Conditions: 150 mM KOAc, 10 mM MgCl2 and 150 mM bicine (pH 8.5), 24 C. This 177-nucleotide RNA was probed chemically with 2A3. Source: RMDB library RFM100, as collected in RNAgym.

[RMDB]
RNA sequence: GGGAACGACUCGAGUAGAGUCGAAAAAGCGAGGCUGCUACGGCAGCCUCGCAAUCUCAGUCCCUGAGACCCUAACUUGUGAUGUUUACCGUUUAAAUCCACGGGUUAGGCUCUUGGGAGCUGCGAACCAAAAGUAAUGCUUCGGCAUUACUUUUGGAAAAGAAACAACAACAACAAC
Reactivity to 2A3 in 0.01 (KOAc 150mM, MgCl2 10mM, bicine 150mM(pH8.5), 24C), signal-to-noise 2, nucleotides 027 to 126: a020g000c010g000a010g030g000c000u060g000c150u170a060c300g080g000c000a000g000c000c000u010c000g000c000a000a000u000c010u000c000a000g000u020c030c000c000u000g000a000g000a020c020c000c020u000a000a010c000u010u000g030u010g010a110u060g080u180u190u090a090c130c120g150u060u060u270a080a160a020u040c030c000a000c000g000g000g000u000u000a000g010g000c000u010c000u000u020g000g020g030a080g070c000u010g020c020g070a060a050